[RMDB]
RNA sequence: GGGAACGACUCGAGUAGAGUCGAAAAGGUAUGCUUCUGCUUUGGCAAAAGCAAACAGAAAUCCCUGUCUAAGUGUGCAAAGGCAUGUAUGGAUAAAUGUGAGCGGGGAAAGGCAUGGAAGCAUUCAAAGCCUUCUGUUGGCUUGCAGGGAAGGUAAUGACCUCGACCGUUUCGACGGUCGAGGUCAAAAAGAAACAACAACAACAAC
Reactivity to 2A3 in 0.01 (KOAc 150mM, MgCl2 10mM, bicine 150mM(pH8.5), 24C), signal-to-noise 1, nucleotides 027 to 156: g090g000u100a070u110g000c000u020u040c000u000g040c120u150u120u190g130g000c000a000a000a000a080g000c010a020a090a000c000a000g140a030a150a030u010c000c000c000u020g020u000c060u100a120a070g050u010g030u070g080c050a110a050a000g020g000c100a050u110g010u050a010u010g000g060a060u010a180a100a000u130g020u060g070a030g110c030g000g000g000g110a070a090a040g030g030c010a020u040g050g030a050a030g000c030a020u080u130c090a050a030a090g000c000c000u030u040c010u050g170u090u030g000g020c040u000u020g020c010a010g020g000g050a030a000g020g000u110a000a190
Structure probing data (2A3) for a 207-nucleotide construct.
Values are in units of 0.01, from 0 to 300, in steps of 10.
2A3 adducts were read by reverse transcription with SuperScript II with manganese.
Source: RMDB library OK3TST, as collected in RNAgym.
For 2A3, 602 sequencing reads were counted.
The RNA was probed in 150 mM KOAc, 10 mM MgCl2 and 150 mM bicine (pH 8.5) at 24 C.